RNA sequence: GGGAACGACUCGAGUAGAGUCGAAAAUACUUAGUACGCGCGUAGUUGCAGGCAUUCCGGGUGCAGCAACUGACGCGGAAGACUUUUCCCAGAGUGUGCGCUUCAACUGGCGUGCUAAGUAGUGCACGAAUUGCACGUACGUUCGCGUACGUGCAAAUCAUGAGGUCAUGUUCGCAUGACCUCAUGAAAAAGAAACAACAACAACAAC
Reactivity to 2A3 in 0.01 (KOAc 150mM, MgCl2 10mM, bicine 150mM(pH8.5), 24C), signal-to-noise 2, nucleotides 027 to 156: u050a000c000u000u000a010g010u020a010c000g000c000g010c000g010u000a000g040u000u000g010c010a080g130g000c030a050u070u140c080c180g270g000g030u010g040c000a020g000c000a000a000c000u070g120a030c000g000c010g000g010a000a000g130a060c010u210u210u000u010c000c000c000a020g000a000g020u120g000u020g020c000g010c020u050u050c110a300a300c120u030g010g040c000g010u020g000c000u000a000a010g000u030a020g000u020g010c010a000c020g040a070a110u030u040g030c010a000c000g000u000a000c000g000u010u120c280g000c000g080u000a000c000g000u000g000c000a000a000a000
Reactivity to DMS in 0.01 (KOAc 150mM, MgCl2 10mM, bicine 150mM(pH8.5), 24C), signal-to-noise 1, nucleotides 027 to 156: u010a000c010u010u010a100g000u000a090c020g000c030g000c030g040u010a040g030u010u010g000c000a200g030g000c000a030u000u000c000c300g010g000g170u000g010c000a300g010c010a020a020c000u000g010a030c010g000c070g000g060a090a130g020a130c190u000u000u000u000c010c000c000a180g010a140g020u000g000u000g020c040g040c050u000u000c110a160a220c090u010g010g070c000g000u070g030c020u000a010a010g000u000a070g020u000g010c040a050c060g010a140a170u000u000g030c000a010c000g030u000a000c000g000u000u030c300g010c070g030u000a010c000g020u000g030c010a000a000a080
Chemical mapping of a 207-nucleotide RNA with 2A3 and DMS. For DMS, 1,643 sequencing reads were counted. For 2A3, 1,244 sequencing reads were counted. Source: RMDB library M2RFOK, as collected in RNAgym. The RNA was probed in 150 mM KOAc, 10 mM MgCl2 and 150 mM bicine (pH 8.5) at 24 C. 2A3 adducts were read by reverse transcription with SuperScript II with manganese.